Chemical mapping of a 207-nucleotide RNA with 2A3 and DMS. The DMS profile rests on 2,101 reads. It was measured as part of the RMDB library OK3TST.
RNA sequence: GGGAACGACUCGAGUAGAGUCGAAAAUGCGUUUCGCAAUUGCAACAAGUGCGCCAGCCUGAGGAGCUUAGUUUAAUUAUUGCGUAUUACGUCAAGGGCUAUUCGAAGCGGGCCAUCGCUCGCCGACGUCGAGUGGAUGAGGGGCUGAUACGGGCAAGACAUGUACCGUAUUCGUACGGUACAUGUCAAAAGAAACAACAACAACAAC
Reactivity to 2A3 in 0.01 (KOAc 150mM, MgCl2 10mM, bicine 150mM(pH8.5), 24C), signal-to-noise 3, nucleotides 027 to 156: u080g000c010g010u010u010u080c030g000c030a040a080u100u070g060c020a040a050c010a100a100g020u040g100c040g040c000c030a010g020c020c030u050g050a060g000g030a010g000c000u050u030a050g040u080u060u130a190a110u120u080a090u060u100g000c000g030u050a050u070u200a070c050g000u010c040a030a090g030g000g030c010u050a090u040u150c050g080a060a010g020c000g000g020g000c040c000a060u050c050g020c010u000c020g010c000c090g090a030c060g030u100c010g010a010g030u050g050g040a040u040g020a060g000g000g000g010c020u020g020a030u030a110c040g010g010g000c020a050a020
Reactivity to DMS in 0.01 (KOAc 150mM, MgCl2 10mM, bicine 150mM(pH8.5), 24C), signal-to-noise 1, nucleotides 027 to 156: u020g040c010g020u000u000u000c010g090c030a000a110u010u000g020c100a030a130c060a040a140g000u000g050c000g000c020c010a170g010c000c000u040g040a120g000g010a150g020c040u010u000a130g000u000u000u000a080a110u000u000a100u000u000g000c070g000u000a110u000u000a060c060g020u000c090a030a170g030g020g010c030u000a040u000u000c010g020a080a020g000c060g000g010g030c060c030a050u010c060g030c010u000c010g030c030c010g000a080c140g020u000c030g000a020g040u000g020g000a080u020g010a240g010g020g000g010c040u000g000a050u000a040c060g000g010g030c050a040a180